Background: The record gives the reactivity of an RNA of 177 nucleotides to 2A3 and DMS. For 2A3 the reverse transcriptase was SuperScript II with manganese. The RNA was probed in 150 mM KOAc, 10 mM MgCl2 and 150 mM bicine (pH 8.5) at 24 C. The DMS profile rests on 829 reads.
[RMDB]
RNA sequence: GGGAACGACUCGAGUAGAGUCGAAAACAAAAAAGGGCUACGCAUUGCUGGCGCAGAUUCUGAUUUAAACGAUUUGAAGCAAUCGAUUGCACAACAUCAAACCAUUGACUUAUCUGUUGAAGAGCAGCAUUGCUGCCCGUUUCGACGGGCAGCAAUGAAAAGAAACAACAACAACAAC
Reactivity to 2A3 in 0.01 (KOAc 150mM, MgCl2 10mM, bicine 150mM(pH8.5), 24C), signal-to-noise 1, nucleotides 027 to 126: c040a000a020a020a030a000a060g030g070g030c050u120a020c030g010c000a030u070u170g030c030u050g060g020c080g000c010a010g020a100u130u000c040u050g130a250u120u050u240a160a150a020c040g000a000u000u030u130g140a060a030g050c040a000a030u030c050g190a160u060u080g100c010a010c000a170a050c010a140u080c060a000a050a070c010c040a060u040u030g020a000c000u110u080a040u140c030u000g140u050u080g090a120a060g020a000g150c000a020g000
Reactivity to DMS in 0.01 (KOAc 150mM, MgCl2 10mM, bicine 150mM(pH8.5), 24C), signal-to-noise 1, nucleotides 027 to 126: c030a050a030a100a090a080a040g000g000g020c050u000a030c080g030c080a060u000u000g000c060u000g020g010c050g000c060a020g010a060u000u000c040u000g000a080u010u000u010a100a100a070c140g010a040u000u000u010g010a100a110g020c120a020a090u000c090g000a080u010u000g000c040a080c040a030a030c200a050u000c080a010a060a080c090c070a030u000u000g000a120c090u000u000a040u000c040u000g000u000u010g000a040a040g020a040g000c030a030g000